[RMDB]
RNA sequence: GGGAACGACUCGAGUAGAGUCGAAAAAUAGCCGAAGUGCCGAGGAAGAGCCGGAGGAGGAGAGGCAAGAGAUCCCGAGGGGGCUUCAGGCUAAAGAGUGGACGAUUUUCGGGGAAGGUCUCCCAAGUGCCCAGCGCCUUCGGGCGCUGGAAAAGAAACAACAACAACAAC
Reactivity to 2A3 in 0.01 (KOAc 150mM, MgCl2 10mM, bicine 150mM(pH8.5), 24C), signal-to-noise 2, nucleotides 027 to 129: a000u050a000g030c000c000g000a030a010g030u120g020c040c000g050a020g020g010a010a010g000a000g060c020c000g000g000a020g000g010a050g060g040a060g040a000g000g080c010a030a000g010a000g040a050u000c000c000c000g060a050g000g010g000g000g010c000u180u130c050a110g030g000c000u060a030a160a060g040a010g070u130g000g030a040c030g000a020u020u000u040u010c030g020g030g000g010a000a000g020g050u050c010u100c020c000c000a020a000g090u070g070c000
Reactivity to DMS in 0.01 (KOAc 150mM, MgCl2 10mM, bicine 150mM(pH8.5), 24C), signal-to-noise 1, nucleotides 027 to 129: a000u030a170g010c030c000g050a100a020g020u010g040c100c090g010a040g050g020a000a000g070a120g060c000c040g010g040a090g010g070a010g000g000a090g030a050g020g020c120a010a110g030a100g040a070u000c130c000c000g010a060g000g000g000g010g040c130u000u040c160a020g030g040c150u000a020a130a020g000a080g000u070g140g050a100c070g020a020u020u000u000u060c060g070g010g010g000a080a010g010g020u010c040u000c000c060c000a070a070g000u030g000c030